This 207-nucleotide RNA was probed chemically with 2A3 and DMS. Conditions: 150 mM KOAc, 10 mM MgCl2 and 150 mM bicine (pH 8.5), 24 C. 2A3 adducts were read by reverse transcription with SuperScript II with manganese. DMS adducts were read by reverse transcription with MarathonRT.
RNA sequence: GGGAACGACUCGAGUAGAGUCGAAAAUUCCAUUUGAGUAUCCUGAAAACGGGCUUUUCAGCAUGGAACGUACAUAUUAAAUAGUAGGAGUGCAUAGUGGCCCGUAUAGCAGGCCUUAACAUUCCUGAAAACGUGAAAAGGUUCGCCUUUUCACGAAGAAUAGGAUCACGUUCGCGUGAUCCUAUUCAAAAGAAACAACAACAACAAC
Reactivity to 2A3 in 0.01 (KOAc 150mM, MgCl2 10mM, bicine 150mM(pH8.5), 24C), signal-to-noise 2, nucleotides 027 to 156: u060u030c010c020a070u120u040u040g020a010g020u080a070u180c000c020u010g010a010a000a060a100c050g000g050g020c030u120u070u070u070c020a040g010c010a030u040g000g080a130a000c030g080u110a020c040a010u190a060u180u300a070a190a130u150a070g050u010a030g060g020a040g030u010g010c020a070u100a230g060u100g020g000c000c000c000g010u010a010u020a020g040c060a050g010g030c000c000u000u020a050a020c010a060u080u030c020c000u040g060a070a090a010a030c010g000u000g010a000a000a000a000g030g010u040u030c140g100c010c000u000u000u000u000c000a000c000g010a000a000
Reactivity to DMS in 0.01 (KOAc 150mM, MgCl2 10mM, bicine 150mM(pH8.5), 24C), signal-to-noise 1, nucleotides 027 to 156: u000u010c020c020a070u000u000u010g020a120g000u000a110u020c040c030u000g000a000a080a190a140c030g000g000g030c030u000u030u060u010c030a180g030c060a060u020g000g000a110a010c050g000u000a130c080a110u000a110u020u010a080a040a190u010a110g010u020a120g030g010a170g040u010g000c010a140u020a120g020u000g000g060c000c000c010g010u020a050u000a110g050c030a020g030g000c050c010u000u010a080a070c020a120u000u000c010c010u000g000a040a030a100a140c000g020u000g000a020a020a010a000g020g040u030u010c300g000c020c030u000u000u000u000c030a030c000g030a000a040